[RMDB]
RNA sequence: GGGAACGACUCGAGUAGAGUCGAAAAAAACUUUUGUGACUUGCUGAAACGGGACUAAUCUCCUCCCCGAGGCUAAGCAAGUAAAAUACGCCUCUCAUAUCCUUACCUGAGGGUGGUAAGGAAAUAACCUGCAACGCUUCCUUCGGGAAGCGUUGAAGUCUUAAUGGAGGUUCGCCUCCAUUAAGACAAAAGAAACAACAACAACAAC
Reactivity to 2A3 in 0.01 (KOAc 150mM, MgCl2 10mM, bicine 150mM(pH8.5), 24C), signal-to-noise 2, nucleotides 027 to 156: a000a000a000c120u190u120u090u110g140u080g040a030c000u030u030g040c000u050g040a020a020a030c040g010g000g020a040c040u130a080a150u030c020u070c100c000u030c010c000c000c000g020a010g000g070c020u050a070a000g000c010a000a030g020u070a040a040a000a000u120a010c040g010c030c000u000c000u050c010a030u070a050u210c000c000u000u010a000c000c000u040g040a090g000g060g030u030g040g000u040a000a020g000g000a010a020a020u020a000a020c000c080u080g050c020a000a000c000g000c000u030u020c000c000u050u050c110g070g020g020a000a000g020c000g000u000u010g000a000a020